[RMDB]
RNA sequence: GGGAACGACUCGAGUAGAGUCGAAAACUGUGAUUUUCUCUAUCUGUUCACGGGUACCCGCCGGAAGGCAGGGCACCUCCGCCGAGAGGGCCUUCCAGAGGCCGCAGAGCACCGUGCCCGGUCCUACCGUUGUUAAAGGGUUCGCCCUUUAACAACGAAAAGAAACAACAACAACAAC
Reactivity to DMS in 0.01 (KOAc 150mM, MgCl2 10mM, bicine 150mM(pH8.5), 24C), signal-to-noise 4, nucleotides 027 to 126: c060u000g010u010g000a060u010u000u000u010c050u010c110u000a140u000c090u010g010u010u000c040a020c050g010g010g020u010a110c020c010c030g010c160c060g030g030a120a070g000g020c040a130g030g000g020c010a020c010c070u020c120c180g030c050c030g010a300g000a060g000g020g000c010c000u000u000c180c140a170g000a060g000g010c030c010g000c030a030g000a190g010c030a090c130c110g010u010g010c000c010c000g010g000u000c020c020u000a110c110
Reactivity to 2A3 in 0.01 (KOAc 150mM, MgCl2 10mM, bicine 150mM(pH8.5), 24C), signal-to-noise 2, nucleotides 027 to 126: c020u030g030u040g070a050u130u140u190u080c150u040c070u190a210u200c120u170g140u010u050c020a000c010g050g010g010u070a090c000c010c010g000c050c040g110g050a070a020g030g000c050a020g010g020g000c010a080c020c010u010c010c040g100c030c020g100a130g030a050g100g010g060c010c000u050u040c110c040a190g020a040g200g000c020c000g000c050a050g020a010g040c000a010c050c050g010u000g000c010c000c000g050g040u110c030c020u040a110c050